[RMDB]
RNA sequence: GGGAACGACUCGAGUAGAGUCGAAAAUAUUCUAGUGUCUUUGCUUUGGUCAUAUCUUAAGGCACGAAGUGCGGACACAUGCACUCAACAAUUAUUGCCUAAUUAAUUUUUCACACGACGCAAGAUAAAUGCGAGUGCCUUUCGAGGCACUCGCAUUAAAAGAAACAACAACAACAAC
Reactivity to 2A3 in 0.01 (KOAc 150mM, MgCl2 10mM, bicine 150mM(pH8.5), 24C), signal-to-noise 1, nucleotides 027 to 126: u300a190u040u040c000u000a070g000u000g010u030c000u000u000u150g000c000u010u090u000g000g000u100c000a070u040a190u300c090u110u090a090a070g200g000c090a060c250g000a060a000g000u000g000c060g000g090a000c070a090c000a020u160g000c000a000c040u050c000a000a070c000a100a140u180u100a100u300u170g010c000c000u000a040a040u110u170a050a140u000u040u000u190u190c000a060c000a000c050g120a000c010g050c000a000a070g000a110u200a150